RNA sequence: GGGAACGACUCGAGUAGAGUCGAAAAGCGGGGCUUGAAACGCGGGUAGCGCGCACGCCCGGCGAAGAAGUUCGCUUACGCGGUGUGCUGGUGCCGAAGUGUCUGCUGCAACGGCACGCUCGACACCUAGAACAUACCGUAUUCGUACGGUAUGUAACGAAUGAUGCUGAUUCGUCAGCAUCAUUCGAAAAGAAACAACAACAACAAC
Reactivity to 2A3 in 0.01 (KOAc 150mM, MgCl2 10mM, bicine 150mM(pH8.5), 24C), signal-to-noise 3, nucleotides 027 to 156: g040c040g010g010g030g040c050u080u070g090a090a080a060c080g000c030g050g040g070u080a030g020c060g000c010g000c100a020c010g000c000c000c000g020g000c010g000a010a000g060a060a010g120u030u010c000g000c000u070u060a050c060g010c070g000g030u020g000u010g020c050u050g000g000u020g000c000c010g000a050a020g030u020g020u060c070u110g100c040u120g010c050a100a010c020g000g010c000a010c020g030c050u000c010g020a010c020a030c010c000u060a060g050a140a000c000a000u000a010c010c000g000u000a020u020u100c210g070u040a000c000g000g000u000a010u010g000u010a030a040
Reactivity to DMS in 0.01 (KOAc 150mM, MgCl2 10mM, bicine 150mM(pH8.5), 24C), signal-to-noise 1, nucleotides 027 to 156: g020c050g010g010g010g000c020u000u020g000a130a070a060c050g030c050g020g000g020u000a110g040c030g030c070g010c030a070c100g010c000c020c050g010g000c000g080a010a120g010a170a130g000u000u000c020g020c010u010u000a140c110g050c110g000g000u000g020u010g030c000u030g000g020u000g010c020c020g030a050a070g010u000g040u000c050u000g050c020u000g030c190a110a150c150g040g000c000a010c010g010c050u000c000g010a070c000a040c000c000u000a150g000a080a060c030a000u000a010c000c000g010u000a030u000u010c300g020u000a010c010g010g010u000a020u000g000u000a050a070
This 207-nucleotide RNA was probed chemically with 2A3 and DMS. For DMS, 3,053 sequencing reads were counted. Values cover nucleotides 27 to 156. The RNA was probed in 150 mM KOAc, 10 mM MgCl2 and 150 mM bicine (pH 8.5) at 24 C. As a SHAPE reagent, 2A3 marks flexible, mostly unpaired nucleotides at the ribose 2'-OH. It was measured as part of the RMDB library M2RFOK.